[RMDB]
The record gives the reactivity of an RNA of 177 nucleotides to 2A3 and DMS.
RNA sequence: GGGAACGACUCGAGUAGAGUCGAAAAAUCGCCGUCAAGGACGCAGUCACACAGCUCACAUACACCGAGUUGAAUGAGCACUCAGAUCGCCUGGCUUGUUGGCUCGCGCAGCGCGGCUUACCAGCGGGACGCGUACUGCAUUCGUGCAGUACGCGUCAAAAGAAACAACAACAACAAC
Reactivity to 2A3 in 0.01 (KOAc 150mM, MgCl2 10mM, bicine 150mM(pH8.5), 24C), signal-to-noise 1, nucleotides 027 to 126: a000u130c070g000c010c000g030u050c020a020a090g160g010a040c010g000c020a000g020u050c040a060c000a000c010a060g000c000u080c060a060c000a040u270a070c030a050c060c090g030a040g070u050u030g140a140a110u220g000a020g000c060a030c000u100c010a040g050a120u100c050g040c040c020u020g040g000c020u040u000g080u060u080g010g010c020u050c120g000c000g000c020a050g060c020g000c000g030g040c000u030u080a030c000c000a000g030c040g070g120
Reactivity to DMS in 0.01 (KOAc 150mM, MgCl2 10mM, bicine 150mM(pH8.5), 24C), signal-to-noise 2, nucleotides 027 to 126: a110u020c150g020c010c030g000u010c080a120a230g010g000a110c050g040c030a030g020u000c070a040c200a060c100a060g010c010u020c090a090c100a110u000a210c030a110c140c070g000a050g020u020u000g010a100a090u000g000a100g030c170a050c050u000c050a110g010a160u000c120g010c070c050u000g020g000c050u000u000g000u000u000g000g000c000u010c200g030c000g070c040a100g010c120g020c030g000g000c010u000u000a150c030c020a120g010c180g000g010

Description: The DMS profile rests on 842 reads. The reactions ran in a buffer of 150 mM KOAc, 10 mM MgCl2 and 150 mM bicine (pH 8.5), at 24 C. 2A3 adducts were read by reverse transcription with SuperScript II with manganese. Values cover nucleotides 27 to 126. For 2A3, 1,236 sequencing reads were counted.